[RMDB]
RNA sequence: GGGAACGACUCGAGUAGAGUCGAAAAGACGCGAGAGACGCGAGACGCGCAAUGGCAGAAGCCGCAAUAGAUCAUACGACGCAAGAGGCAAGACGGAGAGCGCGCAACUUGCGUUAAUAACCAAGAAACCUACUGAUAGUUUCGACUAUCAGUAGGUAAAAGAAACAACAACAACAAC
Reactivity to DMS in 0.01 (KOAc 150mM, MgCl2 10mM, bicine 150mM(pH8.5), 24C), signal-to-noise 7, nucleotides 027 to 126: g000a080c100g020c020g020a110g020a110g000a120c060g040c020g000a110g000a090c060g010c040g000c060a080a120u030g010g000c090a080g000a100a080g020c030c020g030c100a090a080u020a110g000a100u000c120a100u020a100c160g000a050c050g000c140a060a060g000a140g000g000c020a030a190g010a110c090g000g000a100g000a120g020c020g000c200g000c050a080a050c000u000u010g030c020g000u010u000a040a050u020a070a130c070c050a080a120g000a110a110
Reactivity to 2A3 in 0.01 (KOAc 150mM, MgCl2 10mM, bicine 150mM(pH8.5), 24C), signal-to-noise 9, nucleotides 027 to 126: g040a010c030g020c030g040a040g020a000g020a120c020g010c020g040a020g060a050c020g030c000g010c030a050a090u100g060g000c010a020g060a160a040g030c010c010g030c020a030a080u070a120g060a020u090c020a050u080a150c130g010a020c030g020c020a020a030g020a020g090g020c020a040a030g040a030c040g050g030a070g000a020g080c010g000c000g000c010a010a020c000u000u010g000c010g000u010u010a030a050u060a020a030c040c030a030a000g080a120a100
Overview
An RNA of 177 nucleotides, treated with DMS and 2A3 and read out base by base. It was measured as part of the RMDB library OK1LIB. The reactions ran in a buffer of 150 mM KOAc, 10 mM MgCl2 and 150 mM bicine (pH 8.5), at 24 C. The 2A3 profile rests on 21,696 reads. For DMS the reverse transcriptase was MarathonRT. Values are in units of 0.01, from 0 to 300, in steps of 10.